[RMDB]
RNA sequence: GGGAACGACUCGAGUAGAGUCGAAAAGAUAUGGACGGUCGCGAAACGGUAAAUCGUCUAGGAACUACACGACUUAUCGGAAACGAUAAGCGUGCCUAGACGAUUUACCGGAGACCGUCCUAAGUCACCUAGGAGUUCUCUUCGGAGAACUCCUAGGAAAAGAAACAACAACAACAAC
Reactivity to DMS in 0.01 (KOAc 150mM, MgCl2 10mM, bicine 150mM(pH8.5), 24C), signal-to-noise 1, nucleotides 027 to 126: g000a090u000a300u000g010g010a020c000g020g000u000c010g040c180g040a120a140a270c070g000g000u010a000a000a000u010c010g000u010c000u000a000g000g000a080a000c110u010a300c020a000c030g000a220c000u000u010a000u000c000g000g010a130a140a130c020g000a010u000a000a010g020c000g010u000g000c000c010u010a010g000a030c000g050a010u010u010u010a000c000c010g000g010a090g000a020c000c000g040u000c000c000u000a000a040g000u000c010a230